Conditions: 150 mM KOAc, 10 mM MgCl2 and 150 mM bicine (pH 8.5), 24 C. This 177-nucleotide RNA was probed chemically with 2A3 and DMS. The 2A3 profile rests on 4,245 reads.

RNA sequence: GGGAACGACUCGAGUAGAGUCGAAAAGAUAUGGAUGUUGUGGGACGAAGAACUCGGAAACGAGGGAGUCUUCACACUGCAUCCUAAGUCAAACACUUGUUUGCGGCUUCGGCCGCAAACAAGUGAACACUAUAUUGUCCUUCGGGACAAUAUAGUGAAAAGAAACAACAACAACAAC
Reactivity to 2A3 in 0.01 (KOAc 150mM, MgCl2 10mM, bicine 150mM(pH8.5), 24C), signal-to-noise 1, nucleotides 027 to 126: g030a000u090a060u210g000g020a010u000g020u070u010g000u020g010g040g070a030c080g030a110a060g020a040a030c000u000c010g020g070a090a080a030c010g000a010g010g000g030a040g040u020c000u110u130c020a020c000a000c070u040g000c000a010u000c010c000u020a120a020g040u040c060a130a120a000c000a000c010u000u020g040u000u000u030g010c110g050g000c040u060u120c300g130g000c000c000g000c000a000a000a000c000a000a000g000u000g000a000a000
Reactivity to DMS in 0.01 (KOAc 150mM, MgCl2 10mM, bicine 150mM(pH8.5), 24C), signal-to-noise 3, nucleotides 027 to 126: g010a050u000a300u010g010g010a010u000g010u010u000g000u010g000g000g000a030c070g000a040a030g000a220a250c000u010c000g000g000a100a050a160c000g010a020g000g010g010a300g010u000c000u000u000c010a050c000a010c090u000g000c010a000u000c000c000u000a030a130g010u000c040a120a140a200c010a010c000u000u000g000u000u000u000g000c000g010g010c000u000u020c180g020g000c000c000g020c000a000a010a020c000a000a010g000u000g000a030a180